[RMDB]
RNA sequence: GGGAACGACUCGAGUAGAGUCGAAAAGAUAUGGAUUUCUCCAGUGCCAGUUAUAUGUCGGAAACGACAUUUAACGGUAAUUCUGGGAAAUCCUAAGUCAAAACAACACUGCUUCGGCAGUGUUGAACCUUAAACAAUCCUUCGGGAUUGUUUAAGGAAAAGAAACAACAACAACAAC
Reactivity to DMS in 0.01 (KOAc 150mM, MgCl2 10mM, bicine 150mM(pH8.5), 24C), signal-to-noise 4, nucleotides 027 to 126: g000a030u010a300u000g000g000a000u000u000u010c000u020c010c010a020g030u000g000c020c020a180g020u000u000a000u000a000u010g010u000c000g010g000a130a090a260c010g000a010c000a000u010u000u000a000a020c010g010g000u000a040a180u000u000c000u000g000g000g000a010a020a000u000c000c000u000a010a120g010u000c030a110a120a170a220c000a010a020c000a000c000u000g010c010u010u010c280g020g000c000a000g010u000g000u000u000g000a040a150
Reactivity to 2A3 in 0.01 (KOAc 150mM, MgCl2 10mM, bicine 150mM(pH8.5), 24C), signal-to-noise 4, nucleotides 027 to 126: g000a010u050a030u150g030g000a030u020u020u010c300u060c070c000a000g010u030g110c090c020a030g010u010u000a020u010a010u030g020u010c010g020g030a090a040a060c020g010a010c000a010u000u020u000a000a000c010g020g020u050a190a240u260u070c010u000g000g030g010a000a000a010u010c010c000u020a120a000g040u010c030a010a020a110a250c010a000a010c000a010c000u010g030c000u060u100c300g260g010c000a000g000u000g000u000u000g000a010a000